[RMDB]
RNA sequence: GGGAACGACUCGAGUAGAGUCGAAAACAGUAUUAGUAAAGUGUAAGAAAAUUGUCAAAGCUUGGAGCUAUGCUUGUUGAACUUUUGUACCAAUAGCACCUUUACCAGAGGCUGCGUGUUUAAAGCCAUAGAUACCCAGGUUCGCCUGGGUAUCUAUAAAAGAAACAACAACAACAAC
Reactivity to DMS in 0.01 (KOAc 150mM, MgCl2 10mM, bicine 150mM(pH8.5), 24C), signal-to-noise 3, nucleotides 027 to 126: c060a050g000u030a070u020u010a070g020u000a070a040a050g000u010g020u000a080a130g010a060a020a050a080u000u040g010u010c020a050a040a120g030c010u000u020g000g010a090g000c010u000a020u020g000c050u000u010g020u010u000g030a050a100c090u000u010u030u010g010u020a100c090c080a090a080u020a090g000c080a100c030c010u000u000u010a090c080c150a120g030a090g000g000c080u020g020c090g020u010g050u000u000u000a040a060a080g020c150c140
Reactivity to 2A3 in 0.01 (KOAc 150mM, MgCl2 10mM, bicine 150mM(pH8.5), 24C), signal-to-noise 2, nucleotides 027 to 126: c030a000g080u140a090u130u180a020g020u060a000a070a010g110u130g060u230a070a030g060a060a180a050a190u220u240g080u060c020a070a050a020g000c020u020u070g050g020a000g030c010u000a010u040g030c020u060u150g000u090u040g080a050a050c010u080u040u110u110g100u090a030c090c040a060a060u050a070g020c000a040c000c020u000u060u050a010c040c020a070g000a010g040g000c020u070g000c010g030u050g080u020u050u130a020a040a010g030c000c000